RNA sequence: GGGAACGACUCGAGUAGAGUCGAAAAACUGACAUACGUGGCAGAAACACGCCUUACCAGGACUAAACAGCGUGUCUAAAAAACAGUCCUUCAUACCUGAUCUGGAGGGUAGAUCAGGAAUACUAAAAAAAUCGGGUGAAGUUCGCUUCACCCGAAACAGUGUAAACAGGUUCGCCUGUUUACACUGAAAAGAAACAACAACAACAAC
Reactivity to DMS in 0.01 (KOAc 150mM, MgCl2 10mM, bicine 150mM(pH8.5), 24C), signal-to-noise 2, nucleotides 027 to 156: a100c030u000g040a100c030a070u000a090c120g100u010g000g000c010a100g000a240a170a040c010a010c000g010c000c030u000u000a060c050c070a030g060g030a080c040u000a060a020a030c070a060g000c000g000u000g000u000c100u000a000a020a010a050a010a040c120a060g010u000c000c000u000u000c070a110u000a180c000c000u010g020a010u000c010u010g060g000a100g010g030g010u000a010g000a030u000c000a020g010g020a010a070u010a100c070u000a000a000a040a040a080a090a150u000c010g010g010g020u010g010a040a020g000u000u010c300g030c000u000u000c000a030c000c000c000g000a000a010a010
Reactivity to 2A3 in 0.01 (KOAc 150mM, MgCl2 10mM, bicine 150mM(pH8.5), 24C), signal-to-noise 2, nucleotides 027 to 156: a000c020u030g040a000c010a040u110a030c090g070u050g030g000c030a020g030a040a100a000c000a000c010g000c000c000u030u060a020c020c050a020g000g000a000c010u060a120a040a030c020a000g010c010g010u000g030u060c140u070a010a010a010a010a000a000c040a000g000u000c020c000u030u060c050a080u080a140c000c000u000g000a000u010c000u020g050g050a060g050g030g040u050a000g000a000u000c010a000g030g000a000a010u080a040c060u160a020a020a040a030a000a050a130u020c000g000g010g000u000g000a000a000g010u030u050c060g020c070u000u000c000a000c000c000c000g000a000a000a000
Source information
Chemical mapping of a 207-nucleotide RNA with DMS and 2A3. 2A3 is a SHAPE reagent: it acylates the 2'-hydroxyl of flexible nucleotides of all four kinds. It was measured as part of the RMDB library M2RFOK.